[RMDB]
RNA sequence: GGGAACGACUCGAGUAGAGUCGAAAAUUCUCAGCACUCAUCAAGAAGUAGGCUUAGGCCAAUUGCUUGGUGGUGAAAGUAGAGGGAAGGUAGCACUUCGACGCCUCUAAUUACGCUGUGGGAGUAGAAAACUGGACAUCGUUCGCGAUGUCCAGAACCUGUAUAAUGGCUUCGGCCAUUAUACAGGAAAAGAAACAACAACAACAAC
Reactivity to 2A3 in 0.01 (KOAc 150mM, MgCl2 10mM, bicine 150mM(pH8.5), 24C), signal-to-noise 1, nucleotides 027 to 156: u080u000c000u010c020a040g050c010a000c050u240c020a030u010c010a040a030g010a080a050g050u050a030g020g000c010u070u030a030g110g000c010c000a030a120u070u060g030c000u000u000g000g000u020g000g010u020g010a090a080a010g060u050a010g000a020g020g030g010a050a000g000g010u060a000g040c000a030c070u060u020c040g070a040c050g060c000c000u000c000u020a000a060u110u080a030c050g000c050u040g020u070g040g030g030a070g040u120a020g120a130a120a020a020c000u000g000g000a000c000a010u000c010g030u040u010c050g010c020g110a000u000g000u000c000c010a000g000a000a000
Reactivity to DMS in 0.01 (KOAc 150mM, MgCl2 10mM, bicine 150mM(pH8.5), 24C), signal-to-noise 1, nucleotides 027 to 156: u000u000c000u000c000a170g010c030a090c020u020c020a040u030c020a030a010g020a020a090g090u010a100g020g010c000u000u020a190g040g010c030c010a070a100u040u010g000c010u000u000g000g000u010g000g020u020g010a050a040a080g030u000a020g010a110g030g020g020a120a080g000g010u000a240g010c120a260c090u010u000c010g000a160c090g040c030c020u000c000u000a000a110u010u000a090c070g040c020u000g060u000g000g010g000a220g010u010a150g030a020a010a110a120c000u000g000g000a040c000a000u000c030g000u000u000c300g050c040g010a030u010g000u000c000c000a020g010a030a000

Structure probing data (2A3 and DMS) for a 207-nucleotide construct. For DMS the reverse transcriptase was MarathonRT. 2A3 adducts were read by reverse transcription with SuperScript II with manganese.